[RMDB]
This 177-nucleotide RNA was probed chemically with DMS and 2A3. The data come from the RNA Mapping Database (RMDB), library OK2TST.
RNA sequence: GGGAACGACUCGAGUAGAGUCGAAAACUCAUCCUCAAGCGUCAGGAUUCUGACAUUGACCCAUUUACGUUAGAACAAGAAGGGACUUGAGAAAUGGGUGGGUGCACUCCUUCACUUUAUGGAAGAAAGGGCAUAUAAAAUUCGUUUUAUAUGCCCUAAAAGAAACAACAACAACAAC
Reactivity to DMS in 0.01 (KOAc 150mM, MgCl2 10mM, bicine 150mM(pH8.5), 24C), signal-to-noise 8, nucleotides 027 to 126: c010u000c010a080u000c040c000u000c080a020a010g010c110g010u010c050a030g010g010a190u010u010c030u000g010a050c000a100u000u000g010a110c030c020c020a110u000u010u010a070c230g020u000u010a070g010a090a140c070a100a190g010a080a100g010g010g010a150c010u000u000g000a060g010a040a070a040u000g020g010g020u000g010g010g010u000g010c100a090c100u000c030c020u000u000c040a070c050u000u000u000a080u020g010g000a050a070g010a080a110
Reactivity to 2A3 in 0.01 (KOAc 150mM, MgCl2 10mM, bicine 150mM(pH8.5), 24C), signal-to-noise 7, nucleotides 027 to 126: c000u010c000a010u020c010c010u010c020a020a010g040c020g090u050c030a020g080g110a300u300u100c010u040g020a040c000a020u040u180g090a090c000c010c020a080u060u070u110a080c080g030u060u110a070g040a220a040c040a140a030g140a050a100g130g040g070a090c010u030u030g040a040g030a090a080a030u100g020g000g010u020g020g000g000u040g020c030a020c070u040c000c000u040u040c030a060c070u130u170u150a130u280g090g040a030a030g050a110a160
Description: The reactions ran in a buffer of 150 mM KOAc, 10 mM MgCl2 and 150 mM bicine (pH 8.5), at 24 C.